RNA sequence: GGGAACGACUCGAGUAGAGUCGAAAACUCUCAUCCAACUCCUAUUCCAACACGUCCUCGUCGUACAGAGUGGUAACAUGUGUCACCACAUAUCCAAGCUUGGGUACACGGGCUUGACCCAACCCCUAAAACAGAGACGAGUUCGCUCGUCUCUGAACAGACUUAACAUCUUCGGAUGUUAAGUCUGAAAAGAAACAACAACAACAAC
Reactivity to 2A3 in 0.01 (KOAc 150mM, MgCl2 10mM, bicine 150mM(pH8.5), 24C), signal-to-noise 6, nucleotides 027 to 156: c030u020c020u010c030a090u020c030c050a030a030c020u010c010c000u030a040u040u050c030c030a040a020c030a040c100g060u040c010c030u080c050g110u020c040g020u070a070c050a060g070a060g080u040g010g020u080a100a040c050a130u180g110u070g050u130c020a020c060c000a010c010a040u080a030u060c020c030a030a030g010c050u080u070g040g010g010u030a020c020a010c040g000g000g000c010u110u200g110a230c000c000c000a020a030c020c000c000c000u060a080a030a020a040c010a000g000a000g000a000c000g000a000g020u020u030c120g040c070u000c000g000u000c000u000c000u000g000a000a000
Reactivity to DMS in 0.01 (KOAc 150mM, MgCl2 10mM, bicine 150mM(pH8.5), 24C), signal-to-noise 2, nucleotides 027 to 156: c060u000c020u000c020a110u010c040c050a100a100c040u000c010c010u000a060u010u000c000c010a070a070c120a100c070g010u000c020c000u030c080g000u000c050g000u000a100c050a110g020a130g040u010g000g020u000a020a020c040a230u000g030u020g030u000c040a030c020c000a040c030a120u010a070u000c010c030a060a210g010c060u000u000g000g030g040u000a090c060a050c050g030g040g010c030u000u010g010a300c010c000c020a080a030c020c010c000c050u000a050a070a100a170c010a010g000a030g000a030c020g020a030g020u000u000c300g040c040u000c010g020u000c000u000c010u000g000a030a190